[RMDB]
RNA sequence: GGGAACGACUCGAGUAGAGUCGAAAAUGCAGGUGACUUGCAGCAAAUCAUUUUCAUCUUGGGACCUUCUGUCAGCACCCCAUGAGGAAAAACAGGUGACAGGUGGCAUCAGCUGCUUGCUUCUUCCUUCCCUCUGCUAGAGGGGGAAAGAUUUAGAGUAACAUGCCUAAUUCGUUAGGCAUGUUACAAAAGAAACAACAACAACAAC
Reactivity to DMS in 0.01 (KOAc 150mM, MgCl2 10mM, bicine 150mM(pH8.5), 24C), signal-to-noise 2, nucleotides 027 to 156: u000g030c050a070g010g020u000g010a050c030u010u010g020c030a100g040c110a080a110a120u040c060a140u000u000u000u020c030a060u000c030u000u000g000g030g020a160c110c020u000u000c040u010g000u000c110a080g040c030a090c080c010c020c010a070u020g010a110g000g010a050a030a040a050a100c090a120g030g020u000g010a040c050a050g020g020u010g010g030c020a080u000c050a110g030c010u000g030c030u000u000g010c010u000u000c020u000u010c010c000u000u010c010c000c000u000c000u000g020c140u000a180g000a130g010g010g000g010g000a000a010a020g000a140u000u010u010a100g020a300
Reactivity to 2A3 in 0.01 (KOAc 150mM, MgCl2 10mM, bicine 150mM(pH8.5), 24C), signal-to-noise 6, nucleotides 027 to 156: u140g010c020a000g000g060u040g030a090c040u060u050g000c010a020g000c020a060a080a110u130c080a090u030u070u080u100c100a150u030c040u080u070g040g000g060a090c010c020u110u110c050u120g090u110c030a030g060c020a120c020c000c000c030a050u110g030a170g030g040a040a030a010a030a040c060a050g060g010u010g020a020c010a030g000g030u020g070g000c030a080u050c090a150g010c010u020g010c000u020u040g010c030u050u010c020u080u070c010c000u060u130c000c010c000u010c010u020g240c070u150a080g050a040g200g000g000g010g020a010a070a000g040a020u150u220u260a110g020a000
The record gives the reactivity of an RNA of 207 nucleotides to DMS and 2A3. DMS adducts were read by reverse transcription with MarathonRT. For DMS, 5,412 sequencing reads were counted. The reactions ran in a buffer of 150 mM KOAc, 10 mM MgCl2 and 150 mM bicine (pH 8.5), at 24 C. The 2A3 profile rests on 4,229 reads. Reactivities are given for positions 27 through 156. Source: RMDB library OK3TST, as collected in RNAgym.